[RMDB]
RNA sequence: GGGAACGACUCGAGUAGAGUCGAAAAGGAUGCUAUACUCAUUCGCAUGCCAAAGGAUUUCCCACCAUUUGCAAAGAAGAGCUUGUUUCGGCCACCCAUCAAGGAAGAAAGAGUGUGUAUGGUGGGAGCGGUGCAAUCGAUUCGUCGAUUGCACCGCAAAAGAAACAACAACAACAAC
Reactivity to 2A3 in 0.01 (KOAc 150mM, MgCl2 10mM, bicine 150mM(pH8.5), 24C), signal-to-noise 1, nucleotides 027 to 126: g000g000a040u030g030c030u070a000u010a070c120u070c050a060u290u080c040g010c000a010u080g300c000c080a020a040a130g090g000a160u000u010u000c010c000c000a000c000c000a040u110u110u080g060c120a200a000a000g090a150a000g000a020g100c040u110u130g060u020u010u100c030g120g000c000c010a000c000c150c000a000u000c000a040a100g070g000a090a100g050a100a060a060g010a070g040u170g000u000g000u120a040u160g000g000u050g000g000g000a000